[RMDB]
The data come from the RNA Mapping Database (RMDB), library RSTRND. This 207-nucleotide RNA was probed chemically with 2A3 and DMS. Values cover nucleotides 27 to 156. The reactions ran in a buffer of 150 mM KOAc, 10 mM MgCl2 and 150 mM bicine (pH 8.5), at 24 C. For DMS the reverse transcriptase was MarathonRT.

RNA sequence: GGGAACGACUCGAGUAGAGUCGAAAAUCCGGCGCCGAGGCCCCCGGCGUUCGACUGCUGACGCCAGGGAAAACGUCGGCCCCUAAGAUCGGGCGCGACUUAGUGGCGUCGCCGCGAGUAUUCUUGUACGGGGAAGCGCACUUCGCUGUCUCAUCCCGAUAAAGAUCAAGUUCGCUUGAUCUUUAUCAAAAGAAACAACAACAACAAC
Reactivity to 2A3 in 0.01 (KOAc 150mM, MgCl2 10mM, bicine 150mM(pH8.5), 24C), signal-to-noise 3, nucleotides 027 to 156: u010c010c000g000g010c010g000c020c000g050a040g050g000c000c000c000c000c020g000g000c000g010u030u090c030g060a100c040u160g050c100u150g020a000c000g010c010c010a030g090g000g000a030a100a010a030c050g050u010c000g010g000c000c000c000c000u120a120a050g030a160u150c020g010g020g000c130g040c010g080a020c000u080u110a050g040u060g140g020c030g020u010c010g020c020c000g020c040g020a020g060u120a090u120u100c060u110u150g030u080a120c040g010g000g000g000a050a010g000c030g010c080a030c070u100u080c080g010c060u040g060u110c000u010c080a100u040c000c000c000
Reactivity to DMS in 0.01 (KOAc 150mM, MgCl2 10mM, bicine 150mM(pH8.5), 24C), signal-to-noise 2, nucleotides 027 to 156: u000c010c030g020g030c010g030c040c040g000a090g000g010c070c000c020c010c020g010g010c030g000u000u000c010g020a100c060u000g000c080u000g030a010c020g020c010c020a080g020g030g000a050a060a070a060c070g000u000c020g030g020c010c010c010c060u000a100a100g000a180u010c080g050g050g000c030g000c040g020a080c070u000u010a050g010u010g020g010c000g020u000c010g010c020c060g000c020g010a150g040u010a160u000u000c110u010u030g020u010a060c050g010g000g010g020a070a080g010c020g000c070a130c060u000u000c040g030c020u010g020u000c020u010c040a250u000c030c030c020